Source information: The record gives the reactivity of an RNA of 207 nucleotides to 2A3. The 2A3 profile rests on 1,768 reads. Reactivities are rounded to 0.1 and cut off at 0 and 3.

[RMDB]
RNA sequence: GGGAACGACUCGAGUAGAGUCGAAAAGGGGUCAGGCAAGGCUCGUCCAGGCUGAUGACCAUACUGAAGCCUCCACGGUAUGCAAGGCCUUAACGAGCUGAUGACCCUGACGGAGGCACCCAAAAGGUUUAUUAGCCCUUCGGGGCUAAUAAACCAAGAUAACGAAGCGGUUCGCCGCUUCGUUAUCAAAAGAAACAACAACAACAAC
Reactivity to 2A3 in 0.01 (KOAc 150mM, MgCl2 10mM, bicine 150mM(pH8.5), 24C), signal-to-noise 1, nucleotides 027 to 156: g000g010g050g000u010c010a020g110g190c140a180a090g030g000c010u010c000g010u000c020c040a000g000g000c000u010g030a300u010g010a040c000c000a000u010a000c010u020g080a150a020g000c000c000u020c000c010a010c010g000g000u000a000u010g020c000a060a090g000g020c000c000u030u000a010a010c000g000a010g010c010u020g030a030u030g000a000c000c000c000u000g010a020c070g000g000a000g000g030c020a020c000c000c010a030a140a030a050g000g010u020u000u000a000u000u000a000g000c040c000c020u050u140c300g000g000g010g000c000u000a000a000u000a000a000a000c000c000a070a000

Conditions: 150 mM KOAc, 10 mM MgCl2 and 150 mM bicine (pH 8.5), 24 C. The data come from the RNA Mapping Database (RMDB), library RNAMAK.